[RMDB]
RNA sequence: GGGAACGACUCGAGUAGAGUCGAAAACGCCGUGCCGAGCUAGCUGAUGACCGAUCGAAAGUCCUUGUGCUGUCGACCCCUAGCGACACGCGAGCCGACGCACUGAGGUGUGGCGAAGUGCUGUCGAGCCAGUGCCGCUAUUCGUAGCGGCACUGGCAAAAGAAACAACAACAACAAC
Reactivity to 2A3 in 0.01 (KOAc 150mM, MgCl2 10mM, bicine 150mM(pH8.5), 24C), signal-to-noise 4, nucleotides 027 to 126: c050g010c010c020g040u030g030c000c020g080a030g020c020u050a020g000c030u070g010a060u080g060a170c030c040g050a090u100c050g070a060a040a040g030u060c010c030u070u100g050u110g050c080u070g020u040c010g050a150c000c010c000c010u040a040g040c000g030a040c020a000c070g010c000g000a040g030c000c000g010a050c030g010c010a010c030u080g050a080g020g130u100g020u080g090g010c020g010a050a000g010u010g050c170u100g010u030c010g010a000
Reactivity to DMS in 0.01 (KOAc 150mM, MgCl2 10mM, bicine 150mM(pH8.5), 24C), signal-to-noise 1, nucleotides 027 to 126: c110g000c000c030g060u000g040c000c070g000a100g000c010u000a100g010c010u090g000a040u000g000a160c060c010g020a070u030c090g000a130a120a070g000u000c000c030u000u010g020u080g080c070u020g020u000c010g010a110c080c000c010c030u000a060g000c010g000a060c020a050c040g070c060g040a100g000c050c000g040a080c100g000c000a030c050u040g000a140g000g000u000g060u050g020g000c040g000a010a040g000u040g000c020u030g030u000c010g000a290

Structure probing data (2A3 and DMS) for a 177-nucleotide construct. The RNA was probed in 150 mM KOAc, 10 mM MgCl2 and 150 mM bicine (pH 8.5) at 24 C. Reactivities are given for positions 27 through 126. Source: RMDB library OK1LIB, as collected in RNAgym.